This 207-nucleotide RNA was probed chemically with 2A3. Values cover nucleotides 27 to 156. The RNA was probed in 150 mM KOAc, 10 mM MgCl2 and 150 mM bicine (pH 8.5) at 24 C.
RNA sequence: GGGAACGACUCGAGUAGAGUCGAAAAAGCGUAGCGGUACGCCGCUACGCAAGGCGCAUUUGAACUGUAUGGUACGCCUUGCAUAAAGCAAAAGUACUAAAAAAACGUGCCGUUACGACGGCACGAAAAAACAUCCAUUGGUUCGCCAAUGGAUGAAGUUGUGAGUACACUUCGGUGUACUCACAACAAAAGAAACAACAACAACAAC
Reactivity to 2A3 in 0.01 (KOAc 150mM, MgCl2 10mM, bicine 150mM(pH8.5), 24C), signal-to-noise 2, nucleotides 027 to 156: a000g000c000g010u000a000g010c000g010g000u060a060c240g070c000c000g000c000u000a000c000g000c000a000a010g000g000c020g000c050a080u070u070u260g130a180a090c050u070g040u130a120u180g020g000u030a010c010g000c010c030u000u030g000c020a120u090a200a120a080g030c000a060a040a000a000g020u050a010c060u130a020a060a000a000a000a000a080c010g000u010g000c000c000g000u000u050a020c240g000a010c000g010g000c010a000c000g010a010a000a000a010a000a010c010a000u000c010c000a010u000u000g000g020u010u100c140g010c070c010a000a000u000g010g000a000u000g000a010a000